[RMDB]
RNA sequence: GGGAACGACUCGAGUAGAGUCGAAAAGAUAUGGAAUCGUCCGUGUUUGAUGGAGCGCGAUAAGCUAAGAUCGGAAACGAUCUGUAGCUUUUGACGCGUGAGGUCAAACACGGACGAUUCCUAAGUCGAAUAUUAGAACCUUCGGGUUCUAAUAUUCAAAAGAAACAACAACAACAAC
Reactivity to DMS in 0.01 (KOAc 150mM, MgCl2 10mM, bicine 150mM(pH8.5), 24C), signal-to-noise 2, nucleotides 027 to 126: g000a070u010a300u000g010g000a020a000u000c030g020u010c010c000g030u000g030u000u020u000g000a010u000g010g040a300g010c010g040c010g000a170u000a010a020g020c010u010a060a050g000a000u010c020g020g010a160a140a240c020g010a000u000c000u000g010u000a000g000c000u000u000u000u000g010a190c040g020c030g030u000g020a300g010g000u010c000a010a000a020c000a000c000g000g000a000c010g000a000u000u000c000c000u000a020a040g020u000c100
Structure probing data (DMS) for a 177-nucleotide construct. For DMS, 1,973 sequencing reads were counted. It was measured as part of the RMDB library TTRINS. DMS adducts were read by reverse transcription with MarathonRT.